[RMDB]
RNA sequence: GGGAACGACUCGAGUAGAGUCGAAAAUUCGCGUGAUUCGUCACGCGAAGAUUACCGAGAUCCGUGCUCGGUAUAAACAUGGAACCCUUGGAAACAAGGGAAAUAGGCAGGCCUUCGGGCCUGCCAACACCUUUAAAUAGUUCGCUAUUUAAAGGUGAAAAGAAACAACAACAACAAC
Reactivity to DMS in 0.01 (KOAc 150mM, MgCl2 10mM, bicine 150mM(pH8.5), 24C), signal-to-noise 1, nucleotides 027 to 126: u000u000c000g020c000g050u000g000a000u010u020c160g020u000c000a000c000g000c000g010a000a010g000a190u010u010a130c000c000g000a000g000a090u010c060c090g060u010g010c000u000c000g000g000u000a020u000a040a080a110c110a030u020g000g000a080a300c010c000c020u000u000g000g010a170a130a170c000a000a000g010g010g000a000a020a140u000a110g030g030c000a070g000g020c000c040u000u010c140g020g000g000c000c020u000g000c000c000a050a100